Source: RMDB library M2PK50, as collected in RNAgym. An RNA of 177 nucleotides, treated with DMS and 2A3 and read out base by base.
[RMDB]
RNA sequence: GGGAACGACUCGAGUAGAGUCGAAAAGCUGCCAGCUUCGGCUGGCAGCAAAGAACGCUGCAACGCGCAGCGCGCUCGCGAGAGCCCGAAAGAGCGUAGAAAAAACUAGCAAGUUCGCUUGCUAGAACACUCUAAUUUACUUCGGUAAAUUAGAGUGAAAAGAAACAACAACAACAAC
Reactivity to DMS in 0.01 (KOAc 150mM, MgCl2 10mM, bicine 150mM(pH8.5), 24C), signal-to-noise 3, nucleotides 027 to 126: g010c000u000g000c000c000a020g030c020u000u010c220g020g050c020u000g010g000c000a010g000c010a010a040a080g000a100a140c030g000c010u000g020c020a150a120c150g020c140g000c010a020g000c020g010c060g010c000u010c010g010c160g010a130g000a100g000c000c030c010g020a050a070a080g010a070g020c030g010u000a150g020a010a060a070a100a120a130c010u000a010g000c000a010a010g000u000u010c240g020c000u000u000g010c000u000a000g020a070a090
Reactivity to 2A3 in 0.01 (KOAc 150mM, MgCl2 10mM, bicine 150mM(pH8.5), 24C), signal-to-noise 2, nucleotides 027 to 126: g000c000u000g030c030c000a030g010c050u080u120c230g110g020c020u010g000g050c000a010g010c000a000a000a000g000a040a010c030g000c030u010g020c030a270a170c240g060c030g000c160a000g010c010g000c020g000c010u010c000g010c020g040a080g000a020g110c000c050c000g050a060a060a010g030a010g000c030g000u100a040g190a040a180a000a000a000a000c000u000a000g020c000a000a020g000u030u070c150g030c110u000u010g000c010u010a000g000a030a000